Source: RMDB library OK3TST, as collected in RNAgym. Chemical mapping of a 207-nucleotide RNA with 2A3 and DMS. For DMS the reverse transcriptase was MarathonRT. For DMS, 17,164 sequencing reads were counted.
RNA sequence: GGGAACGACUCGAGUAGAGUCGAAAAACGAUAGCCCGAUGAUGCGGAACUUCAUCCGUUGGGGACGAAUUAGCGACGCCGAUGCUAAGAAGUUUGGCCGUACUGCCGAUCAUCCGGCGCAUCAGAAUGCGCUAGCUAACAUUCUGUAUGGCGGCGAUCUUAUCUUAUGUUUCGACAUAAGAUAAGAAAAAGAAACAACAACAACAAC
Reactivity to 2A3 in 0.01 (KOAc 150mM, MgCl2 10mM, bicine 150mM(pH8.5), 24C), signal-to-noise 6, nucleotides 027 to 156: a000c060g050a070u080a050g040c000c010c030g020a080u080g010a010u080g020c030g000g080a080a060c070u140u080c070a100u030c040c030g040u060u110g030g000g020g030a020c040g040a060a130u060u020a040g010c010g050a040c030g040c040c030g030a040u080g000c000u020a050a050g040a080a020g060u060u110u140g090g000c000c010g030u060a090c060u100g000c000c000g030a040u060c020a040u030c060c040g000g000c020g000c010a010u020c000a010g050a040a010u050g020c060g030c130u070a060g040c020u030a030a020c010a010u030u000c010u020g100u190a040u050g060g000c000g010g010c010g020a010
Reactivity to DMS in 0.01 (KOAc 150mM, MgCl2 10mM, bicine 150mM(pH8.5), 24C), signal-to-noise 5, nucleotides 027 to 156: a080c070g010a150u010a100g020c000c010c010g020a060u000g000a060u000g020c020g010g020a080a140c090u000u000c030a100u000c020c050g030u000u000g020g010g010g010a150c030g000a100a100u000u000a070g010c010g010a160c030g020c020c020g020a140u000g010c020u000a100a110g010a090a170g010u000u000u010g030g020c030c060g010u000a080c090u000g020c020c020g000a110u000c070a110u000c050c030g010g020c050g030c030a030u000c000a110g000a040a080u000g010c030g010c050u010a090g010c150u000a080a040c020a040u000u000c020u010g010u010a100u000g010g000c010g010g030c030g000a110